This 207-nucleotide RNA was probed chemically with 2A3. The reactions ran in a buffer of 150 mM KOAc, 10 mM MgCl2 and 150 mM bicine (pH 8.5), at 24 C.
RNA sequence: GGGAACGACUCGAGUAGAGUCGAAAAUUACGCAAGUAAAAACGUCGAGGUUAUAAUAACCGGAAAUAACAAACAAACUGUAACAAAUACACAAGAUUUUGCUGGACAAACUCCAGUUUAUCAAAUGAAUUUUGCAAACAGUUUUUCUUCACAAUUACACAUAAAUUUGGUUCGCCAAAUUUAUGUGAAAAGAAACAACAACAACAAC
Reactivity to 2A3 in 0.01 (KOAc 150mM, MgCl2 10mM, bicine 150mM(pH8.5), 24C), signal-to-noise 1, nucleotides 027 to 156: u100u000a020c000g030c060a000a140g070u110a150a050a030a030a030c040g100u090c050g090a130g070g050u050u030a070u030a300a090u150a160a020c000c030g000g010a110a140a090u150a040a010c040a030a100a000c000a000a020a000c010u000g000u060a000a040c000a020a010a000u080a040c010a000c010a110a000g000a010u090u120u100u070g020c010u000g000g000a000c050a180a130a050c030u000c030c000a000g030u040u060u000a040u000c000a030a090a030u040g020a050a070u080u010u050u070g000c020a050a150a100c030a020g000u000u000u000u130u040c050u050u070c070a030c010a080a170u100u170a100